[RMDB]
Structure probing data (DMS and 2A3) for a 207-nucleotide construct. The reactions ran in a buffer of 150 mM KOAc, 10 mM MgCl2 and 150 mM bicine (pH 8.5), at 24 C. For 2A3 the reverse transcriptase was SuperScript II with manganese. For DMS, 4,713 sequencing reads were counted.
RNA sequence: GGGAACGACUCGAGUAGAGUCGAAAAGUGUCACUUCGGUGACACAAAGCGUACUACGUGUCCUACUAUGAAGCCUGCUCCCCACCAUGAUCCCAAAUAGGAUCAUGAGGCAGGUGGAGUAGAGACACGUAUCGCAAAAGUGAAUCUUCGGAUUCACCGUGAUGAAAAGGUUCGCCUUUUCAUCACGAAAAGAAACAACAACAACAAC
Reactivity to DMS in 0.01 (KOAc 150mM, MgCl2 10mM, bicine 150mM(pH8.5), 24C), signal-to-noise 3, nucleotides 027 to 156: g020u000g000u000c010a020c010u010u000c300g050g030u000g010a000c000a000c000a020a030a140g050c040g000u000a110c130u000a030c020g050u000g020u000c010c010u000a040c020u000a080u000g000a300a300g010c000c000u000g030c050u020c250c100c020c070a300c200c000a000u000g010a000u000c000c000c000a060a150a190u020a060g000g000a010u010c000a030u000g000a210g010g000c030a050g030g040u000g000g000a300g030u000a000g000a060g010a030c000a010c000g000u000a000u000c000g000c040a060a060a050a140g030u000g020a020a030u000c010u010u010c290g050g010a040u000u000c000a000c000
Reactivity to 2A3 in 0.01 (KOAc 150mM, MgCl2 10mM, bicine 150mM(pH8.5), 24C), signal-to-noise 5, nucleotides 027 to 156: g020u010g000u000c000a000c020u050u130c300g140g000u000g000a000c000a000c000a010a070a000g000c020g060u130a100c040u010a000c030g010u000g000u030c020c010u040a070c010u070a140u300g070a030a000g010c000c000u000g010c010u130c050c050c020c000a010c010c000a000u000g000a000u040c020c020c000a130a300a050u230a100g000g000a000u000c000a000u000g000a000g020g000c000a000g000g000u020g020g010a010g000u000a000g030a020g010a010c020a000c000g000u000a000u050c010g000c010a040a080a030a040g000u000g000a010a000u010c030u060u150c300g110g010a000u000u010c000a000c000